[RMDB]
Description:
The data come from the RNA Mapping Database (RMDB), library M2RFPK. This 207-nucleotide RNA was probed chemically with 2A3 and DMS. For 2A3 the reverse transcriptase was SuperScript II with manganese. For 2A3, 2,353 sequencing reads were counted. Reactivities are given for positions 27 through 156. Conditions: 150 mM KOAc, 10 mM MgCl2 and 150 mM bicine (pH 8.5), 24 C.

RNA sequence: GGGAACGACUCGAGUAGAGUCGAAAAAAUGGCACUGCAGAGCUGAUGGGCCAUGUAACUAUCCAAAAUGAGAUCCCAUCUUGCACACUGUGCUAAUUUGAGAUUCUCAUGCCUCCUACUUGGAGAGACCGCAUGCCCAGCUUCGGCUGGGCAUGAAAUCUAGCUAUGCAUUCGUGCAUAGCUAGAUAAAAGAAACAACAACAACAAC
Reactivity to 2A3 in 0.01 (KOAc 150mM, MgCl2 10mM, bicine 150mM(pH8.5), 24C), signal-to-noise 3, nucleotides 027 to 156: a000a010u050g010g000c020a030c030u060g020c090a040g010a050g090c060u060g000a030u020g000g010g000c020c030a040u040g050u070a070a100c090u060a080u190c060c060a090a050a050a070u100g020a100g010a140u080c000c000c000a020u000c020u050u170g000c010a040c000a020c060u070g000u010g000c000u040a040a110u020u020u020g090a110g020a040u080u000c000u010c010a030u120g060c000c000u010c000c010u090a240c140u070u130g020g000a040g010a010g040a080c000c140g000c030a000u010g000c000c020c010a000g010c000u030u030c130g090g000c020u010g000g050g010c010a000u000g010a000a000
Reactivity to DMS in 0.01 (KOAc 150mM, MgCl2 10mM, bicine 150mM(pH8.5), 24C), signal-to-noise 2, nucleotides 027 to 156: a020a030u000g000g000c020a060c020u000g000c090a190g040a170g050c030u010g020a100u010g020g020g030c110c040a040u000g010u000a100a110c090u010a110u000c030c110a070a080a150a060u000g000a030g000a130u000c000c000c000a020u000c060u000u000g010c010a060c040a180c100u010g000u000g010c010u010a040a070u000u010u000g000a180g010a120u000u000c000u010c000a110u010g030c010c000u010c040c000u010a100c150u000u000g010g000a070g030a200g020a070c060c090g040c000a020u000g000c000c000c010a030g000c010u000u010c240g050g000c000u000g030g000g010c000a020u010g000a030a060